The record gives the reactivity of an RNA of 177 nucleotides to DMS and 2A3.
RNA sequence: GGGAACGACUCGAGUAGAGUCGAAAACAGCAUGCAUUUAUGAAACAUAAGGGCGGUGAUUCAACUGACUUCAUAGCCCUCAUUAUGGCUUAUGGCAAUUGCACAUUUGGUGCUCCAGAUGAUGCCUGAUGUGCGUAAAGUUCGCUUUACGCACAUCAAAAGAAACAACAACAACAAC
Reactivity to DMS in 0.01 (KOAc 150mM, MgCl2 10mM, bicine 150mM(pH8.5), 24C), signal-to-noise 1, nucleotides 027 to 126: c190a120g010c080a080u000g010c020a050u010u010u010a010u040g000a110a130a180c080a030u000a060a020g000g000g060c000g020g040u000g000a040u000u020c030a220a110c230u000g020a050c110u000u000c000a060u000a150g010c010c010c050u010c130a090u000u000a100u000g010g030c060u030u000a010u000g030g000c100a160a030u000u010g030c010a120c000a050u000u000u000g000g010u020g050c240u000c030c040a010g030a060u010g000a020u010g000c000c070u020
Reactivity to 2A3 in 0.01 (KOAc 150mM, MgCl2 10mM, bicine 150mM(pH8.5), 24C), signal-to-noise 2, nucleotides 027 to 126: c020a030g050c000a030u060g000c000a020u000u040u130a110u140g080a070a070a070c010a020u070a020a010g010g000g000c020g050g000u020g000a030u030u050c090a250a220c170u180g030a030c030u030u000c020a010u000a030g000c000c000c000u010c000a030u000u080a020u040g060g010c010u040u040a030u090g070g000c030a050a190u160u070g020c030a000c000a030u050u050u120g100g010u080g040c070u010c020c000a010g020a010u050g020a010u050g010c020c020u000

For DMS, 740 sequencing reads were counted. 2A3 adducts were read by reverse transcription with SuperScript II with manganese. Values cover nucleotides 27 to 126.